[RMDB]
RNA sequence: GGGAACGACUCGAGUAGAGUCGAAAAUGGAUGGGAAAGGAACUCACCUAUGAGAGAUGUGGCACUACACCCUGGCUGACAACUGGAUGUGACCUGCAAAACGGUUCGUGCCGUGGCGAGGUCCUGGCACCUGCUGUUGGUUCGCCAACAGCAGGUGAAAAGAAACAACAACAACAAC
Reactivity to 2A3 in 0.01 (KOAc 150mM, MgCl2 10mM, bicine 150mM(pH8.5), 24C), signal-to-noise 2, nucleotides 027 to 126: u140g020g030a010u020g000g020g010a050a120a050g040g040a070a050c010u010c020a060c000c000u040a160u120g100a080g010a000g010a010u070g020u010g070g000c010a030c080u070a020c040a040c010c020c010u020g090g020c020u030g010a030c000a100a070c090u040g020g060a090u080g150u120g070a010c010c010u080g090c030a030a020a000a000c030g030g040u200u220c100g120u300g000c000c010g030u000g050g020c000g000a020g010g000u000c000c010u030g020g060
Reactivity to DMS in 0.01 (KOAc 150mM, MgCl2 10mM, bicine 150mM(pH8.5), 24C), signal-to-noise 3, nucleotides 027 to 126: u010g020g000a070u000g010g000g010a100a090a060g000g010a090a080c120u000c040a040c080c040u000a100u010g000a100g010a060g010a100u000g010u020g010g030c030a050c040u000a090c070a080c050c010c020u000g000g040c050u000g000a070c150a040a140c070u000g010g000a080u000g000u010g020a010c020c000u030g010c050a040a250a100a020c020g010g010u010u000c300g000u010g000c000c000g020u000g000g000c300g010a050g000g000u010c000c020u000g000g010
Structure probing data (2A3 and DMS) for a 177-nucleotide construct. 2A3 adducts were read by reverse transcription with SuperScript II with manganese. DMS adducts were read by reverse transcription with MarathonRT. The 2A3 profile rests on 1,683 reads. The RNA was probed in 150 mM KOAc, 10 mM MgCl2 and 150 mM bicine (pH 8.5) at 24 C. It was measured as part of the RMDB library OK2TRN.